This 170-nucleotide RNA was probed chemically with 2A3 and DMS.
[RMDB]
RNA sequence: GGGAACGACUCGAGUAGAGUCGAAAAGAAAAGAGCGAGACCUCCGAUUCGAGAGCUCCUGGACUCCUCGGCUCUGGAGUCCUCCGACCCGUGAGGUCGAGGAUCCCCGCGCAGGGAGGCAGCCACCACAGGCCCCGGUUCGCCGGGGCCAAAAGAAACAACAACAACAAC
Reactivity to 2A3 in 0.01 (KOAc 150mM, MgCl2 10mM, bicine 150mM(pH8.5), 24C), signal-to-noise 2, nucleotides 027 to 129: g130a020a160a000a000g180a070g020c070g020a000g010a060c000c030u010c000c050g110a130u110u120c080g020a020g010a020g060c000u010c020c000u050g010g000a020c030u000c000c000u050c040g030g010c010u000c020u030g000g000a020g080u040c000c010u050c060c020g000a020c000c020c060g060u210g010a080g010g010u000c010g000a000g000g030a050u110c000c000c020c050g040c000g000c000a040g010g080g000a040g010g000c010a010g060c000c020a080c000c020a050c020a050
Reactivity to DMS in 0.01 (KOAc 150mM, MgCl2 10mM, bicine 150mM(pH8.5), 24C), signal-to-noise 1, nucleotides 027 to 129: g000a020a010a020a020g070a040g090c020g060a080g070a120c050c040u020c040c000g020a100u020u060c060g060a050g010a090g010c100u010c000c000u020g070g000a000c080u000c000c070u010c080g040g000c050u010c020u030g050g050a000g020u000c000c040u050c100c100g000a020c060c020c030g020u040g040a090g070g000u030c000g000a000g030g010a070u000c000c020c080c110g020c140g060c080a110g000g010g000a010g000g020c180a150g000c090c030a030c110c070a000c000a160
Conditions: 150 mM KOAc, 10 mM MgCl2 and 150 mM bicine (pH 8.5), 24 C.
Values cover nucleotides 27 to 129.
The data come from the RNA Mapping Database (RMDB), library 15KLIB.